[RMDB]
Source: RMDB library RFM100, as collected in RNAgym. This 177-nucleotide RNA was probed chemically with 2A3 and DMS. Values cover nucleotides 27 to 126. For 2A3 the reverse transcriptase was SuperScript II with manganese. For DMS, 1,928 sequencing reads were counted. The reactions ran in a buffer of 150 mM KOAc, 10 mM MgCl2 and 150 mM bicine (pH 8.5), at 24 C. For DMS the reverse transcriptase was MarathonRT.
RNA sequence: GGGAACGACUCGAGUAGAGUCGAAAAUUGCUUUACAGUGUUAGUGACCCAUUCCCUUUGACGAUUCCUAGGUGGAGAUGGGGCAUGAGGAUCCUCCAGGGGAAAGAUUCACUACCACUGAGCAACAAUCGAACAAGCAGUUCGCUGCUUGUUCGAUAAAAGAAACAACAACAACAAC
Reactivity to 2A3 in 0.01 (KOAc 150mM, MgCl2 10mM, bicine 150mM(pH8.5), 24C), signal-to-noise 5, nucleotides 027 to 126: u050u010g010c010u080u050u130a150c010a010g000u010g000u000u000a000g010u000g010a000c000c000c050a090u010u040c010c000c000u000u000u000g000a000c010g010a010u120u180c000c020u070a160g100g040u160g070g190a220g000a210u270g090g040g030g010c010a040u150g050a040g030g000a010u010c010c000u000c010c020a000g010g010g000g000a000a030a010g060a040u060u000c010a000c000u010a010c020c000a000c000u000g000a000g020c010a000a030c020a020
Reactivity to DMS in 0.01 (KOAc 150mM, MgCl2 10mM, bicine 150mM(pH8.5), 24C), signal-to-noise 1, nucleotides 027 to 126: u010u000g000c000u010u020u000a290c040a010g030u010g030u000u000a000g040u000g000a000c070c020c050a280u000u000c000c000c000u020u050u000g000a070c270g010a050u010u000c000c000u000a060g010g020u000g020g020a030g000a200u020g000g000g010g000c020a050u040g010a030g000g000a100u000c000c100u000c010c140a030g000g010g000g000a000a020a030g000a100u000u000c020a000c040u000a000c000c000a000c000u000g000a020g000c000a080a010c160a080